[RMDB]
RNA sequence: GGGAACGACUCGAGUAGAGUCGAAAAAGAUGGCAGGUUCACUCCGUACGGUGCGGAAGUUCGCGCUUCCGUGAAACGCGAAAAUCGGACGGUGGCUGCAAGUCGCAUCGCAAAACCGCGGCAAGUGUUAACCUGGACCUCUUCGGAGGUCCAGGAACUGCUUUUACACGUUCGCGUGUAAAAGCAGAAAAGAAACAACAACAACAAC
Reactivity to 2A3 in 0.01 (KOAc 150mM, MgCl2 10mM, bicine 150mM(pH8.5), 24C), signal-to-noise 1, nucleotides 027 to 156: a010g140a050u120g110g000c030a000g060g060u200u260c010a020c100u000c000c000g010u020a020c000g000g050u030g020c000g010g000a000a010g010u060u220c070g020c020g000c140u030u000c010c020g040u020g070a180a150a000c230g030c000g010a050a000a000a080u090c000g000g000a000c020g070g000u000g040g000c030u040g010c050a050a000g000u010c000g000c010a030u050c030g050c150a090a130a000a010c120c080g000c010g050g000c040a040a020g040u000g050u220u050a050a050c000c000u010g010g010a010c000c000u010c010u080u000c100g070g000a000g000g010u000c000c020a000g000g010a000a000